[RMDB]
RNA sequence: GGGAACGACUCGAGUAGAGUCGAAAAUUUGAGUGGGCCUGUGUCUCUGUGUGCGCCGUGUGCGGAUAGCUUGCUAUGCGUGUGUGGUUGUGUGUGGAUUGAUGUGGGUUUUAACUUGUUGCCGUUCUAUCUUAGACGGCUUCGGCCGUCUAAGAUAAAAAGAAACAACAACAACAAC
Reactivity to 2A3 in 0.01 (KOAc 150mM, MgCl2 10mM, bicine 150mM(pH8.5), 24C), signal-to-noise 1, nucleotides 027 to 126: u060u030u280g000a000g000u080g000g030g000c020c000u020g030u040g000u020c000u010c020u000g030u010g020u010g100c030g030c000c020g020u030g010u020g020c000g000g010a010u020a000g010c050u010u190g030c000u010a000u050g130c030g030u080g000u020g010u000g000g000u110u170g010u050g000u000g000u000g060g020a020u020u070g050a050u120g010u020g000g000g000u050u050u040u090a040a030c020u000u020g010u000u000g040c050c000g040u050u000c010

Structure probing data (2A3) for a 177-nucleotide construct. For 2A3 the reverse transcriptase was SuperScript II with manganese. The RNA was probed in 150 mM KOAc, 10 mM MgCl2 and 150 mM bicine (pH 8.5) at 24 C.